[RMDB]
RNA sequence: GGGAACGACUCGAGUAGAGUCGAAAAUCACUGUGCACUAAUGGACUGCAUCAUGUUUGAUGCAGCAGUGUCAGGAGGACUGAACACAUCGGUUUUGAGAGCAGUGCUGCCCAGAGAUAUGGUGUUCAUCGCGUGUAGCAUUCGUGCUACACGCGAUAAAAGAAACAACAACAACAAC
Reactivity to 2A3 in 0.01 (KOAc 150mM, MgCl2 10mM, bicine 150mM(pH8.5), 24C), signal-to-noise 2, nucleotides 027 to 126: u060c000a030c020u030g030u080g000c020a000c010u060a050a140u140g140g120a160c010u040g010c000a000u000c000a010u130g200u300u270u120g010a010u010g000c010a010g000c000a000g000u010g020u010c050a020g030g000a050g030g010a030c020u030g060a090a000c030a030c020a090u070c100g080g080u060u070u090u150g230a270g000a000g000c030a010g020u010g080c020u060g030c000c000c060a000g010a010g020a060u120a070u250g090g050u010g020u020u060c010
Reactivity to DMS in 0.01 (KOAc 150mM, MgCl2 10mM, bicine 150mM(pH8.5), 24C), signal-to-noise 2, nucleotides 027 to 126: u000c010a070c000u000g000u020g000c040a040c010u030a060a150u000g000g010a170c010u000g010c010a000u000c020a060u010g010u030u000u040g010a000u000g000c010a020g040c090a050g020u010g010u020c010a070g010g000a120g000g000a140c060u000g010a030a060c060a070c030a260u000c070g000g010u010u000u020u000g020a100g000a120g000c000a080g000u000g030c050u000g000c000c010c020a140g000a110g010a120u010a080u000g030g000u000g010u000u000c010

Conditions: 150 mM KOAc, 10 mM MgCl2 and 150 mM bicine (pH 8.5), 24 C. This 177-nucleotide RNA was probed chemically with 2A3 and DMS. The data come from the RNA Mapping Database (RMDB), library OK2TST. The 2A3 profile rests on 1,529 reads. For DMS, 1,490 sequencing reads were counted. In probing experiments dimethyl sulfate is read out at A N1 and C N3, which are open when not base-paired.